The record gives the reactivity of an RNA of 177 nucleotides to 2A3. The RNA was probed in 150 mM KOAc, 10 mM MgCl2 and 150 mM bicine (pH 8.5) at 24 C. Reactivities are given for positions 27 through 126.
RNA sequence: GGGAACGACUCGAGUAGAGUCGAAAACGGGCGGCCUUGCUGUCUGCUGCGCGAACCGAUGCCGCGGCCGGGGCCGUCAUCACCGGCGCUCAACGGGAUCGGGCAUGGGCCCGGCGGUCGACCGGAAUCCGGGAUCGAGAUUCGUCUCGAUCCCGGAAAAAGAAACAACAACAACAAC
Reactivity to 2A3 in 0.01 (KOAc 150mM, MgCl2 10mM, bicine 150mM(pH8.5), 24C), signal-to-noise 2, nucleotides 027 to 126: c010g010g010g000c010g000g000c010c050u110u150g040c010u120g100u130c090u270g070c030u010g020c040g000c030g140a110a100c070c050g080a120u130g000c050c020g020c020g030g010c000c000g000g000g000g000c000c000g000u000c000a000u000c010a000c020c020g010g040c030g000c020u080c090a080a090c090g000g130g000a170u020c000g040g030g010c080a120u140g170g050g030c000c000c000g030g040c000g000g020u050c070g000a140c010c020g030g000a000a020
About this RNA:
The data come from the RNA Mapping Database (RMDB), library OK1LIB.